Structure probing data (2A3 and DMS) for a 177-nucleotide construct. For DMS the reverse transcriptase was MarathonRT. DMS (dimethyl sulfate) methylates the pairing face of unpaired adenines and cytosines.

[RMDB]
RNA sequence: GGGAACGACUCGAGUAGAGUCGAAAAAGUAUCAUUGUUGCUGCCUCAGUGCCUGCCUUUAUCGCAUUGGCCUUGAUACUGACUGGCUCGAUUACACCAAGCUCCAUCAUGUUCUUGAUAUCGCCGCACCGGGAAGUGUAUUCGUACACUUCCCGGUAAAAGAAACAACAACAACAAC
Reactivity to 2A3 in 0.01 (KOAc 150mM, MgCl2 10mM, bicine 150mM(pH8.5), 24C), signal-to-noise 2, nucleotides 027 to 126: a000g070u100a060u070c050a080u070u100g050u170u090g030c080u060g010c030c060u090c020a040g000u050g070c000c010u050g070c000c030u060u190u140a180u180c110g000c090a030u000u040g030g010c030c000u000u020g000a010u040a050c030u010g020a030c040u020g060g010c010u000c020g060a070u070u090a030c060a020c050c040a070a000g020c000u000c020c000a030u050c040a050u090g040u110u020c020u030u070g030a050u030a000u250c050g040c050c000g080c030
Reactivity to DMS in 0.01 (KOAc 150mM, MgCl2 10mM, bicine 150mM(pH8.5), 24C), signal-to-noise 3, nucleotides 027 to 126: a040g010u000a030u000c040a060u010u000g010u000u010g010c060u000g010c050c030u000c060a080g020u000g000c020c050u000g000c070c070u000u000u010a060u010c230g040c110a110u000u010g000g010c020c050u000u000g020a040u000a020c040u000g010a130c060u010g000g010c010u000c060g010a090u000u000a100c110a070c070c040a040a110g000c040u000c020c040a060u010c070a050u000g000u000u000c010u000u000g000a050u000a100u010c060g020c030c040g000c140